Structure probing data (DMS and 2A3) for a 177-nucleotide construct.
It was measured as part of the RMDB library RFM100.
The reactions ran in a buffer of 150 mM KOAc, 10 mM MgCl2 and 150 mM bicine (pH 8.5), at 24 C.
RNA sequence: GGGAACGACUCGAGUAGAGUCGAAAAUAUUCUAGCGCUUUUAACGUUUAUCCAGAAAAUGAAAUAGAUCGCCCACGCUAAGGAAACGAUCUAUUUCGUUUGUAAACCUUAUUAAGCCGACCGCCUAGAACGGCUUAUACUUCGGUAUAAGCCGUUCAAAAGAAACAACAACAACAAC
Reactivity to DMS in 0.01 (KOAc 150mM, MgCl2 10mM, bicine 150mM(pH8.5), 24C), signal-to-noise 2, nucleotides 027 to 126: u030a100u050u010c050u010a060g000c170g030c000u020u010u020u000a020a040c160g000u000u000u000a030u000c210c180a160g030a060a010a040a000u010g010a000a030a000u000a000g060a000u000c030g030c120c000c160a210c040g030c160u090a090a080g000g000a060a110a290c010g030a000u000c010u000a000u000u000u000c000g010u000u020u000g000u000a000a010a030c090c010u000u000a010u020u010a010a030g000c000c010g000a130c020c060g020c120c030u000a080
Reactivity to 2A3 in 0.01 (KOAc 150mM, MgCl2 10mM, bicine 150mM(pH8.5), 24C), signal-to-noise 3, nucleotides 027 to 126: u190a070u070u070c040u030a040g040c010g020c140u010u030u030u040a020a000c020g020u000u020u010a080u050c050c030a050g190a110a010a000a000u010g000a000a000a020u000a000g010a000u010c000g070c080c000c000a040c060g090c120u130a150a070g010g000a080a090a050c000g010a000u000c000u010a000u000u000u000c000g000u010u010u010g020u020a000a000a010c000c000u020u050a070u080u080a130a020g010c000c000g010a020c000c040g060c010c010u010a030